[RMDB]
RNA sequence: GGGAACGACUCGAGUAGAGUCGAAAAAACGUUGCAUGAUCGUAAAACAUGCCCGGCUUACCGUGAGCCGCCUUUGAAAGAACGGUUUACACGGACUCUGUUGCGUUACGCACGUACCUAACUUGUGAAAACGGCAUCUUGUUCGCAAGAUGCCGAACAAACUAACAACGUUCGCGUUGUUAGUUUGAAAAGAAACAACAACAACAAC
Reactivity to 2A3 in 0.01 (KOAc 150mM, MgCl2 10mM, bicine 150mM(pH8.5), 24C), signal-to-noise 8, nucleotides 027 to 156: a000a000c010g000u010u010g000c000a000u000g020a050u210c040g090u220a100a130a000a010c000a000u010g000c020c000c000g020g000c020u040u100a100c010c000g000u000g000a000g000c000c010g040c030c010u110u070u060g150a110a070a020g010a040a020c020g010g010u000u040u070a020c000a010c000g060g060a160c040u060c070u150g110u100u050g030c030g040u070u070a050c190g030c020a010c020g020u060a050c000c040u080a120a210c070u120u110g040u040g140a040a050a030a020c010g000g000c000a000u000c000u010u010g010u050u060c130g010c120a000a000g000a000u000g000c000c000g000a000a000
Reactivity to DMS in 0.01 (KOAc 150mM, MgCl2 10mM, bicine 150mM(pH8.5), 24C), signal-to-noise 2, nucleotides 027 to 156: a080a060c010g000u000u010g050c020a030u000g000a050u010c050g120u000a030a070a060a080c030a060u000g000c030c070c020g040g010c070u000u000a080c110c040g010u010g030a050g020c010c000g020c020c020u000u000u000g000a130a180a170g000a120a020c040g020g030u010u000u000a110c010a100c000g000g010a080c060u000c060u000g010u000u020g020c000g000u010u000a070c040g020c020a040c040g050u000a070c050c020u010a100a100c080u000u000g000u000g010a040a070a110a200c020g020g000c000a010u000c010u000u000g000u000u000c250g020c030a000a020g000a020u000g020c000c000g000a010a030